[RMDB]
RNA sequence: GGGAACGACUCGAGUAGAGUCGAAAAUCUUCUCCCUUCGGGGAGAAGAAAACAUAAACAUGAGAAAAUGCAGCUGUCGCACAGCAGCCAUAAAAGUAAAAAAAAGUCACAUCUUCGGAUGUGACAAUCCUAAUCAAUUGUUCGCAAUUGAUUAGGAAAAAGAAACAACAACAACAAC
Reactivity to 2A3 in 0.01 (KOAc 150mM, MgCl2 10mM, bicine 150mM(pH8.5), 24C), signal-to-noise 2, nucleotides 027 to 126: u000c000u020u000c010u000c000c000c010u030u010c210g060g010g000g000a020g010a000a000g000a010a030a000a000c020a030u240a080a160a010c070a070u190g070a030g160a160a130a050a050u090g030c040a020g000c000u040g010u120c030g020c150a040c000a050g040c010a000g030c010c000a010u130a060a120a030a020g110u190a070a050a030a010a000a010a040a060g000u000c000a000c000a000u000c000u030u070c200g160g000a000u000g010u020g010a000c000a010a000
Reactivity to DMS in 0.01 (KOAc 150mM, MgCl2 10mM, bicine 150mM(pH8.5), 24C), signal-to-noise 3, nucleotides 027 to 126: u000c000u000u000c010u000c000c000c000u000u010c210g040g010g030g000a010g020a000a010g000a000a030a090a110c070a060u000a110a050a100c100a040u010g000a160g000a060a050a090a080u000g010c090a100g010c030u000g000u000c190g000c110a300c050a070g000c000a020g010c020c100a080u020a040a060a080a160g010u030a010a000a010a040a060a070a060a110g000u000c000a010c000a000u000c000u010u020c180g010g000a020u000g010u010g000a020c010a020a040